[RMDB]
RNA sequence: GGGAACGACUCGAGUAGAGUCGAAAAGGGGUCUAAAGAGACAUCUUGGAUUUAGCUUGGAGGUGUAGCUGAAGCCUCCACGGCUACACUACCCACCCAAGCUUGUCAGAUGUCUACCUUUAGACGGAGGCACCCAAAAUCACUCUUCGGAGUGAAAUGUAAGUAGGAAGUUCGCUUCCUACUUACAAAAAGAAACAACAACAACAAC
Reactivity to DMS in 0.01 (KOAc 150mM, MgCl2 10mM, bicine 150mM(pH8.5), 24C), signal-to-noise 2, nucleotides 027 to 156: g000g010g050g000u000c000u000a020a000a000g000a150g010a040c020a020u010c030u020u000g010g020a070u000u000u000a030g040c040u000u000g000g000a300g020g000u010g020u000a020g000c040u000g000a070a170g030c030c000u000c020c080a160c030g010g020c000u010a010c020a020c000u010a060c030c020c070a300c030c010c000a020a130g000c080u000u000g010u000c030a080g020a020u000g020u000c000u000a020c290c050u010u010u000a040g020a070c040g000g020a010g030g060c000a070c010c010c010a030a060a160a260u000c010a030c020u000c000u000u010c300g020g000a000g020u010g010a020a090a100
Reactivity to 2A3 in 0.01 (KOAc 150mM, MgCl2 10mM, bicine 150mM(pH8.5), 24C), signal-to-noise 3, nucleotides 027 to 156: g020g000g000g010u000c010u010a000a000a000g020a010g000a000c010a000u010c040u200u300g150g000a030u240u250u210a000g010c000u010u000g000g000a000g000g000u000g000u000a000g000c010u020g000a050a000g000c000c000u020c010c010a020c010g000g010c010u010a010c000a000c000u090a100c060c060c010a020c000c000c000a000a000g000c000u000u000g010u000c070a040g000a010u010g000u000c000u020a120c010c000u000u000u000a000g000a000c000g000g000a000g000g000c000a020c000c010c000a010a070a000a130u060c030a000c000u000c000u070u090c220g120g010a000g000u010g010a040a020a020